[RMDB]
RNA sequence: GGGAACGACUCGAGUAGAGUCGAAAAGUGCAUCGCCGAGGUGAUUGAACGGCUGGCCACGUUCAUCAUCGGCUACAGGGGCUGAAUCCCCUGGGUUGUCACCAGAAGCGUUCGCAGUCGGGCGUUUCGUACAGCUUGCUUUCGAGCAAGCUGUACGAAAAGAAACAACAACAACAAC
Reactivity to 2A3 in 0.01 (KOAc 150mM, MgCl2 10mM, bicine 150mM(pH8.5), 24C), signal-to-noise 1, nucleotides 027 to 126: g030u040g000c010a020u030c080g000c010c020g080a040g010g030u000g000a070u090u200g010a030a000c000g080g040c050u050g070g000c040c000a020c000g010u010u000c000a030u000c040a050u020c070g020g040c000u040a050c000a000g000g020g000g010c110u290g140a080a160u220c000c000c000c000u000g000g000g000u000u010g160u030c000a040c020c000a110g030a060a000g000c000g000u020u090c040g000c160a070g040u200c080g000g000g000c000g000u000u000u000